[RMDB]
RNA sequence: GGGAACGACUCGAGUAGAGUCGAAAAGGAAGCCCAUCUCGAGAAACAGGCUCACGUUGAGGAUUGGUCAUGGUGAGUUCCAUCUGCUCCGACCCUGGGUACACUACACUAGCAUUCACCCUGGGUCGCCAUAAUUGAUCUUCGGAUCAAUUAUGGCAAAAGAAACAACAACAACAAC
Reactivity to 2A3 in 0.01 (KOAc 150mM, MgCl2 10mM, bicine 150mM(pH8.5), 24C), signal-to-noise 3, nucleotides 027 to 126: g050g000a120a010g070c010c000c000a030u020c100u070c070g110a080g060a030a190a050c050a080g080g000c010u010c010a040c040g090u050u100g060a070g040g130a260u130u210g070g050u050c020a060u110g160g000u030g040a030g000u060u070c040c010a100u030c020u090g050c020u030c030c020g000a000c010c010c020u050g000g000g030u080a030c050a010c060u190a050c190a090c180u120a040g030c030a050u080u140c050a030c010c000c010u000g000g000g000u010c000
Reactivity to DMS in 0.01 (KOAc 150mM, MgCl2 10mM, bicine 150mM(pH8.5), 24C), signal-to-noise 3, nucleotides 027 to 126: g000g000a150a120g030c020c020c030a140u010c020u000c050g020a060g010a070a100a050c130a110g020g000c020u000c050a060c090g020u010u000g010a090g010g000a150u000u010g020g000u000c070a030u010g010g010u000g010a080g000u010u020c030c060a090u000c040u010g010c060u010c070c050g000a020c020c000c000u000g010g000g020u010a120c220a090c090u020a070c180a100c280u020a030g000c050a140u010u000c150a070c010c000c000u000g000g000g020u000c010
Chemical mapping of a 177-nucleotide RNA with 2A3 and DMS. The reactions ran in a buffer of 150 mM KOAc, 10 mM MgCl2 and 150 mM bicine (pH 8.5), at 24 C. For 2A3 the reverse transcriptase was SuperScript II with manganese. Values cover nucleotides 27 to 126.